This 207-nucleotide RNA was probed chemically with DMS and 2A3. The RNA was probed in 150 mM KOAc, 10 mM MgCl2 and 150 mM bicine (pH 8.5) at 24 C. Source: RMDB library OK3TST, as collected in RNAgym.
[RMDB]
RNA sequence: GGGAACGACUCGAGUAGAGUCGAAAAGUGGAUGCUAGAGCUCUGGUUCUCUGCUGCCAAAGGAUCUCACAGGUGCUUGCAAGGAAGACACUGUAGUUCUUUGCUGCUUCCAAACCCCUCCACAAGCCAAGAGUAGCCAUAUGAAAGGGUGUGAGCACUGAUUUACUGGAUUCGUCCAGUAAAUCAGAAAAGAAACAACAACAACAAC
Reactivity to DMS in 0.01 (KOAc 150mM, MgCl2 10mM, bicine 150mM(pH8.5), 24C), signal-to-noise 3, nucleotides 027 to 156: g030u000g000g020a090u000g010c060u000a060g010a110g010c020u000c040u000g020g020u000u000c030u010c030u000g020c030u010g030c070c050a040a080a100g020g010a050u000c030u000c120a080c050a100g000g010u000g030c030u000u000g020c080a160a160g020g020a050a070g010a060c040a040c050u000g010u000a190g010u000u000c010u000u000u000g030c040u000g000c030u000u000c020c020a040a120a110c030c030c010c020u000c010c030a060c030a070a140g000c040c030a080a120g000a130g030u000a070g010c020c020a080u000a060u010g010a070a100a070g000g010g020u000g000u000g000a070g010c080a190
Reactivity to 2A3 in 0.01 (KOAc 150mM, MgCl2 10mM, bicine 150mM(pH8.5), 24C), signal-to-noise 5, nucleotides 027 to 156: g050u030g010g020a030u070g040c060u090a050g010a040g060c030u020c050u100g090g000u160u020c050u000c020u070g040c010u010g020c020c000a060a020a020g040g000a050u050c040u030c050a040c020a060g000g080u040g060c010u040u060g010c060a080a080g060g080a040a020g060a050c050a020c120u060g030u070a030g050u040u000c010u030u020u050g010c030u040g000c000u100u010c020c000a130a160a250c020c010c010c020u040c030c030a050c030a060a030g000c040c020a070a020g020a010g030u040a020g020c030c070a070u070a040u160g070a090a040a050g020g030g000u050g020u030g020a030g010c030a010
The 2A3 profile rests on 4,053 reads.
The DMS profile rests on 6,898 reads.